RNA sequence: GGGAACGACUCGAGUAGAGUCGAAAACGAGUCAAAUAGCAAUGAUUCGAAGCACUUCUUUUUACACUAUUUCGGAAACCCAAGGACUCAAUCGUAUGGAUAUGUAAAAUACAGGAUUUCCAAUCCUAGCAGGAAAGGGAGGGAAACGGAUACUCAACUAUCAACUAUAGUUCGCUAUAGUUGAUAGAAAAGAAACAACAACAACAAC
Reactivity to DMS in 0.01 (KOAc 150mM, MgCl2 10mM, bicine 150mM(pH8.5), 24C), signal-to-noise 5, nucleotides 027 to 156: c040g010a080g030u000c020a070a050a110u010a170g020c180a180a180u010g000a090u000u000c030g000a110a100g020c080a060c060u010u010c030u030u000u000u010u010a100c100a070c030u000a070u000u000u000c050g000g000a090a060a110c020c000c010a080a130g030g010a070c040u000c040a060a080u010c080g020u000a090u000g020g010a090u000a060u000g020u010a070a060a080a100u000a100c060a120g030g010a070u000u000u010c040c060a050a090u000c030c040u000a090g000c030a120g020g010a050a050a110g010g010g000a060g000g000g010a070a060a040c050g000g010a120u000a110c020u010c020a030a280
Reactivity to 2A3 in 0.01 (KOAc 150mM, MgCl2 10mM, bicine 150mM(pH8.5), 24C), signal-to-noise 9, nucleotides 027 to 156: c020g000a000g010u010c020a020a080a130u140a110g050c080a080a100u090g000a040u040u030c020g030a050a010g060c060a050c060u100u070c020u060u130u040u090u150a040c070a020c040u110a100u100u150u120c040g030g030a050a060a070c010c010c020a040a040g050g010a020c010u010c020a030a070u070c040g030u100a050u110g060g010a040u020a050u170g050u090a040a080a060a010u110a070c050a040g030g040a060u080u030u030c040c020a010a010u020c000c010u010a030g040c080a030g040g060a070a090a010g020g010g010a050g030g000g010a030a090a010c030g010g020a010u050a090c030u030c040a030a080